[RMDB]
RNA sequence: GGGAACGACUCGAGUAGAGUCGAAAAAUUAUUGCUAUCGGAUUGGAAAGCGAACACUUCAAAAAUGCGCCACCGGCGAAAUUGCCUAAAAGUUUAGGAAGUGAUUCGUCGUUGAGAGAUGAAUGAACGUCGCAUUAUAGUUCGCUAUAAUGCGACGAAAAGAAACAACAACAACAAC
Reactivity to 2A3 in 0.01 (KOAc 150mM, MgCl2 10mM, bicine 150mM(pH8.5), 24C), signal-to-noise 2, nucleotides 027 to 126: a000u150u090a020u090u050g010c000u000a010u120c000g060g000a090u070u040g090g040a190a000a000g000c040g000a000a000c010a020c040u040u050c000a010a010a000a010a010u090g000c060g030c030c070a130c080c040g000g000c000g000a000a050a060u180u090g010c000c000u060a170a120a000a000g080u000u020u070a060g010g040a050a000g000u020g130a300u000u010c030g010u010c000g010u140u100g050a050g010a010g000a040u110g050a080a100u110g020a050a020
Reactivity to DMS in 0.01 (KOAc 150mM, MgCl2 10mM, bicine 150mM(pH8.5), 24C), signal-to-noise 2, nucleotides 027 to 126: a120u000u020a110u040u000g000c000u010a060u060c060g000g000a150u020u050g000g020a110a180a110g000c000g000a000a030c050a120c070u020u020c000a000a030a070a040a020u010g030c090g000c020c010a080c280c140g040g050c000g000a080a060a090u030u010g000c060c050u020a060a030a120a090g000u020u020u010a050g010g000a050a100g000u000g000a160u000u000c000g000u000c100g030u020u000g010a110g000a040g010a070u000g000a080a090u030g000a160a190